[RMDB]
RNA sequence: GGGAACGACUCGAGUAGAGUCGAAAAUUCAACUGUGCAAAAUAACCUUAACUGCAGACGUUAUGACAUACAUACAUUCUAUGAAUUCCACUAUUUUGGAGGACUGGAAUUUUGGUCUACAACCUCCUGUACUUUGUGGGUUCGCCCACAAAGUACAAAAAGAAACAACAACAACAAC
Reactivity to DMS in 0.01 (KOAc 150mM, MgCl2 10mM, bicine 150mM(pH8.5), 24C), signal-to-noise 2, nucleotides 027 to 126: u000u000c020a070a180c090u040g050u000g080c030a030a000a240a080u040a010a100c060c020u080u010a100a150c060u000g010c050a000g000a130c300g000u000u030a000u000g000a020c080a070u030a300c080a030u020a010c090a160u020u050c000u030a030u000g030a090a070u040u000c040c050a120c200u000a050u000u000u070u000g050g010a020g050g000a220c130u000g000g000a040a070u010u000u030u000g000g000u000c080u010a120c190a040a180c060c010u010c060c040
Reactivity to 2A3 in 0.01 (KOAc 150mM, MgCl2 10mM, bicine 150mM(pH8.5), 24C), signal-to-noise 4, nucleotides 027 to 126: u060u050c040a060a050c000u070g010u050g150c010a010a000a050a280u130a130a060c020c030u060u080a070a010c020u090g020c000a000g030a020c030g040u060u050a110u140g090a040c070a110u130a060c000a010u120a040c020a070u150u040c040u080a080u160g050a020a020u010u000c000c010a060c050u060a170u120u150u110u050g020g010a020g000g020a030c040u070g000g050a010a030u020u020u120u160g130g000u030c000u050a030c040a060a100c010c010u010c000c000

Structure probing data (DMS and 2A3) for a 177-nucleotide construct. For 2A3 the reverse transcriptase was SuperScript II with manganese. For 2A3, 1,953 sequencing reads were counted. Source: RMDB library OK1LIB, as collected in RNAgym. DMS adducts were read by reverse transcription with MarathonRT.